[RMDB]
Structure probing data (2A3 and DMS) for a 177-nucleotide construct. Values are in units of 0.01, from 0 to 300, in steps of 10. Conditions: 150 mM KOAc, 10 mM MgCl2 and 150 mM bicine (pH 8.5), 24 C. Source: RMDB library M2PK50, as collected in RNAgym.
RNA sequence: GGGAACGACUCGAGUAGAGUCGAAAAGAACGCCACUUCGGUGGCGUUCGAAGUUCUACCACACGUAGAUCACUAUCGUGUGAGACAUCGAUAGAUGUCAAAUGGUCCGGAAGUUCGCUUCCGGAAAUACGGGAAUAUUAUUCGUAAUAUUCCCGUAAAAAGAAACAACAACAACAAC
Reactivity to 2A3 in 0.01 (KOAc 150mM, MgCl2 10mM, bicine 150mM(pH8.5), 24C), signal-to-noise 7, nucleotides 027 to 126: g000a000a000c000g010c000c000a010c000u020u050c210g110g000u000g010g010c000g000u000u000c000g000a000a000g000u020u000c030u060a230c050c010a010c000a000c000g010u020a010g020a210u240c100a080c300u050a050u230c050g000u010g000u010g020a080g000a010c000a000u010c000g080a060u120a300g000a000u020g000u000c010a040a000a100u160g090g030u020c000c000g000g010a010a000g010u060u130c170g070c130u010u000c000c000g000g000a000a000a000
Reactivity to DMS in 0.01 (KOAc 150mM, MgCl2 10mM, bicine 150mM(pH8.5), 24C), signal-to-noise 8, nucleotides 027 to 126: g000a000a000c010g020c000c000a010c000u000u010c170g040g030u000g000g020c000g010u000u000c000g000a080a120g000u000u000c010u000a160c110c010a010c010a000c010g020u000a020g000a240u010c300a130c040u000a020u010c030g020u000g010u000g010a300g000a010c000a000u000c000g000a180u010a110g000a010u000g010u000c000a050a050a100u010g010g000u000c000c000g000g000a030a010g010u000u020c190g010c000u000u000c000c000g010g000a000a020a080